[RMDB]
RNA sequence: GGGAACGACUCGAGUAGAGUCGAAAAAUUCCAAGAACGAAGUAACCGUUGAUCCGCGUGUUACAGGAUUGGAAGGACGGGAUGAAAUGUCAGUUGUUGAUUAUGUUAAAAGAGAAUCAUAUUUAGCAACAUUUAAUUGGACUAGCGAUGCAGGACCCCGUACUCCAACUUUCGAGUUGGAGUACGGAAAAGAAACAACAACAACAAC
Reactivity to 2A3 in 0.01 (KOAc 150mM, MgCl2 10mM, bicine 150mM(pH8.5), 24C), signal-to-noise 1, nucleotides 027 to 156: a120u040u010c010c000a020a110g160a080a000c080g030a040a140g040u080a000a010c000c090g050u110u170g080a110u130c050c090g000c010g000u190g050u160u070a000c000a050g000g040a050u080u110g010g040a000a010g000g010a030c090g050g060g000a000u040g050a000a000a190u110g050u120c050a030g000u000u000g000u000u010g000a040u000u150a090u040g000u000u080a000a300a190a000g120a000g010a010a070u050c010a000u120a130u050u020u090a000g040c030a030a000c000a010u000u290u240a280a110u100u060g040g000a010c000u000a000g160c000g050a040u110g050c010a040g010g150a090c150c000